[RMDB]
RNA sequence: GGGAACGACUCGAGUAGAGUCGAAAAUCUGAGCUUAACGUCUGUUUUAACUGAAACGCCGCAUUCUACACUACAACGCUAAGGCGAGGAAAUGUUCAUAGUGUAAGGAGAGCGGGAACUGGAAAACCAGCAAUGGACUAUUCGUAGUCCAUUGCUGAAAAGAAACAACAACAACAAC
Reactivity to 2A3 in 0.01 (KOAc 150mM, MgCl2 10mM, bicine 150mM(pH8.5), 24C), signal-to-noise 4, nucleotides 027 to 126: u040c040u080g030a010g110c030u060u140a080a010c070g080u010c080u040g050u000u040u020u070a110a080c050u030g080a050a010a070c120g050c030c000g000c000a010u000u000c000u000a010c000a000c010u060a020c030a100a030c000g010c020u110a130a090g160g000c040g030a040g050g210a060a140a100u190g040u120u040c070a050u050a040g000u000g000u000a070a130g000g000a040g010a010g000c010g010g010g000a000a030c010u020g010g100a040a060a020a030c020
Reactivity to DMS in 0.01 (KOAc 150mM, MgCl2 10mM, bicine 150mM(pH8.5), 24C), signal-to-noise 3, nucleotides 027 to 126: u020c010u040g020a140g020c120u020u030a030a140c090g000u000c110u000g010u010u020u000u000a020a110c130u010g000a090a110a110c210g010c030c000g010c030a150u010u000c010u020a010c010a010c000u000a000c170a090a070c020g030c000u000a050a060g050g020c000g050a060g020g010a030a130a090u050g000u020u010c130a120u000a040g000u000g020u010a000a060g000g010a000g030a160g020c010g000g000g010a040a030c100u020g010g000a080a080a110a100c190